RNA sequence: GGGAACGACUCGAGUAGAGUCGAAAAGAUAUGGAUUUAUGAUGUCGAUAAGCUCGUAUCGGAAACGAUAUAGAGCUUUUGACGACAGAGUAAAUCCUAAGUCAAAAGCUUUCCUUCGGGAAAGCAAUCCAAUUACGAAGUUCGCUUCGUAAUUGGAAAAAGAAACAACAACAACAAC
Reactivity to 2A3 in 0.01 (KOAc 150mM, MgCl2 10mM, bicine 150mM(pH8.5), 24C), signal-to-noise 1, nucleotides 027 to 126: g020a010u110a010u120g000g000a000u000u010u010a020u070g060a040u020g000u000c040g090a050u040a290a000g020c010u000c010g000u010a050u000c010g000g060a090a040a030c030g000a000u000a020u060a280g050a000g020c040u000u010u030u050g020a030c070g010a000c010a000g030a010g000u020a000a000a010u000c010c010u000a090a000g000u000c040a000a070a120a170g020c000u000u000u000c010c000u000u050c300g080g030g000a000a010a020g000c000a000a000
Reactivity to DMS in 0.01 (KOAc 150mM, MgCl2 10mM, bicine 150mM(pH8.5), 24C), signal-to-noise 3, nucleotides 027 to 126: g010a050u000a300u010g000g000a030u000u010u000a010u000g000a300u020g000u000c010g020a190u010a010a030g010c000u000c000g020u000a000u000c000g000g000a060a090a160c010g030a010u000a000u000a080g000a030g000c000u000u000u000u040g030a200c120g020a020c020a000g000a300g010u000a000a000a000u010c000c000u010a030a110g020u020c010a160a040a150a160g010c000u000u000u000c000c000u010u010c210g030g040g000a010a000a000g000c010a040a040

An RNA of 177 nucleotides, treated with 2A3 and DMS and read out base by base. It was measured as part of the RMDB library TTRDES. Conditions: 150 mM KOAc, 10 mM MgCl2 and 150 mM bicine (pH 8.5), 24 C. As a SHAPE reagent, 2A3 marks flexible, mostly unpaired nucleotides at the ribose 2'-OH.